[RMDB]
Chemical mapping of a 170-nucleotide RNA with DMS and 2A3.
It was measured as part of the RMDB library 15KLIB.
Reactivities are given for positions 27 through 129.
High DMS reactivity at an A or C suggests that its Watson-Crick edge is free.
The reactions ran in a buffer of 150 mM KOAc, 10 mM MgCl2 and 150 mM bicine (pH 8.5), at 24 C.
DMS adducts were read by reverse transcription with MarathonRT.
RNA sequence: GGGAACGACUCGAGUAGAGUCGAAAACCUGAUACUGUUGAAGUCCCACCGCAAGUGGUGAAACUUCCGUCUGCACCUCAGACUAUCCAGCCCGAGGUAAAAGAAGUUGCACCUGUCUAUGAGGCUGUUACCAUCGUCUUCGGACGAUGGAAAAGAAACAACAACAACAAC
Reactivity to DMS in 0.01 (KOAc 150mM, MgCl2 10mM, bicine 150mM(pH8.5), 24C), signal-to-noise 3, nucleotides 027 to 129: c020c000u040g030a110u000a050c130u020g030u000u000g000a060a070g040u010c070c050c000a060c070c130g030c050a070a120g000u000g010g000u050g010a070a050a060c030u000u000c020c090g020u050c160u050g040c280a090c020c010u000c020a090g010a080c000u020a120u060c210c100a030g040c050c000c080g010a050g040g000u000a050a070a180a120g000a060a020g000u000u050g010c060a000c020c020u000g000u010c000u090a090u000g020a030g040g020c060u030g020u070u010a060
Reactivity to 2A3 in 0.01 (KOAc 150mM, MgCl2 10mM, bicine 150mM(pH8.5), 24C), signal-to-noise 4, nucleotides 027 to 129: c000c000u000g060a030u070a290c080u150g060u140u170g030a050a000g090u090c030c010c000a030c040c000g050c090a120a000g030u030g000g000u000g020a060a010a000c010u020u050c030c040g060u070c060u070g090c120a090c030c040u090c010a000g010a040c020u100a180u110c050c100a020g000c010c020c020g010a000g000g030u010a060a030a000a070g050a030a010g060u040u050g010c000a000c000c040u020g020u020c000u030a210u160g030a040g000g050c000u020g060u070u020a060